[RMDB]
RNA sequence: GGGAACGACUCGAGUAGAGUCGAAAAGAUAUGGACCCACGUAACUUCAACAGCUAGACGGUCGGAAACGACCGCUAGACAUGAAGGAGAAGUGGGUCCUAAGUCAAAAGGAACACUUCGGUGUUCCGAGAAAAGUAGCCUUCGGGCUACUUUUCUCAAAAGAAACAACAACAACAAC
Reactivity to DMS in 0.01 (KOAc 150mM, MgCl2 10mM, bicine 150mM(pH8.5), 24C), signal-to-noise 1, nucleotides 027 to 126: g020a060u020a300u000g000g020a000c000c000c000a000c000g000u020a050a150c030u000u000c010a070a200c250a300g000c000u000a010g020a170c000g020g030u000c000g000g000a170a120a120c000g000a010c000c000g000c000u020a040g000a110c100a300u020g030a000a020g000g000a080g000a140a130g000u000g020g000g030u010c010c000u010a000a150g010u000c030a070a060a190a170g010g000a020a000c000a000c000u010u010c280g030g000u010g000u000u000c000c020